[RMDB]
The data come from the RNA Mapping Database (RMDB), library M2PK50. An RNA of 177 nucleotides, treated with 2A3 and DMS and read out base by base. For 2A3, 3,569 sequencing reads were counted. DMS adducts were read by reverse transcription with MarathonRT. Conditions: 150 mM KOAc, 10 mM MgCl2 and 150 mM bicine (pH 8.5), 24 C. Values cover nucleotides 27 to 126. For DMS, 3,652 sequencing reads were counted.
RNA sequence: GGGAACGACUCGAGUAGAGUCGAAAAGACCGUGGGUUCGCCCACGGUCAAAUCCCACGAUGCGGCGCAUCGAGCCAACAAUCCGACGGUCGGUCCGAAGAAAAAGAGCGGUGUUCGCACCGCUCAACACUAAAACAGACUUCGGUCUGUUUUAGUGAAAAGAAACAACAACAACAAC
Reactivity to 2A3 in 0.01 (KOAc 150mM, MgCl2 10mM, bicine 150mM(pH8.5), 24C), signal-to-noise 3, nucleotides 027 to 126: g010a000c010c010g000u010g040g000g020u040u090c210g110c050c020c000a000c000g000g010u000c000a000a000a000u010c000c000c000a010c030g030a020u110g040c120g080g050c050g010c100a060u040c070g030a030g040c040c010a050a060c020a040a180u060c060c040g030a030c040g080g000u030c020g010g010u000c020c020g070a120a070g050a080a170a050a020a000g000a000g000c000g000g010u010g020u030u060c210g010c070a000c000c020g010c000u010c000a000a000
Reactivity to DMS in 0.01 (KOAc 150mM, MgCl2 10mM, bicine 150mM(pH8.5), 24C), signal-to-noise 4, nucleotides 027 to 126: g010a010c010c000g070u000g020g000g020u000u010c210g010c000c000c000a000c010g000g000u010c000a000a070a070u000c010c000c010a170c120g010a030u000g010c040g030g020c110g010c030a030u000c050g010a150g010c040c080a080a100c100a110a080u010c070c030g000a130c070g010g000u000c020g000g010u010c010c010g000a080a110g000a070a080a070a110a120g010a010g030c000g000g000u000g020u010u020c180g000c000a010c010c000g010c000u000c000a020a040